Background: The data come from the RNA Mapping Database (RMDB), library OK1LIB. Chemical mapping of a 177-nucleotide RNA with DMS and 2A3.
RNA sequence: GGGAACGACUCGAGUAGAGUCGAAAAGACAGCUUGAAAUUUUUACUGGUACACCGAUUAUGUUUACAGCAGUGCAUAAUAUUAAUGAUGAUCGAUUUGAACGCGUAAAUAGCUGGAAAGAUGUAGACGAGGCCAUGUAAUUCGUUACAUGGCCUCGAAAAGAAACAACAACAACAAC
Reactivity to DMS in 0.01 (KOAc 150mM, MgCl2 10mM, bicine 150mM(pH8.5), 24C), signal-to-noise 1, nucleotides 027 to 126: g000a170c050a010g000c010u020u000g000a010a190a070u020u050u090u000u000a000c030u000g000g010u010a000c050a040c230c090g000a050u020u030a030u000g040u050u000u000a130c120a130g000c000a080g010u030g000c050a010u000a100a000u000a120u030u020a000a120u060g010a010u000g000a020u000c010g030a120u000u020u000g030a110a140c050g000c100g080u000a060a000a020u070a000g000c000u150g050g030a070a140a060g040a090u030g000u000a010g000a120
Reactivity to 2A3 in 0.01 (KOAc 150mM, MgCl2 10mM, bicine 150mM(pH8.5), 24C), signal-to-noise 2, nucleotides 027 to 126: g010a000c140a000g000c070u040u060g200a110a080a270u120u110u090u060u090a050c030u010g000g050u020a000c010a050c050c020g060a060u020u020a100u010g030u000u220u120a100c080a000g080c000a000g170u000g110c020a080u050a070a060u100a100u260u110a050a060u000g100a080u010g050a050u140c040g020a020u000u030u250g000a090a010c000g020c000g010u020a000a000a050u110a030g000c020u000g000g020a000a150a000g060a000u190g050u140a010g000a150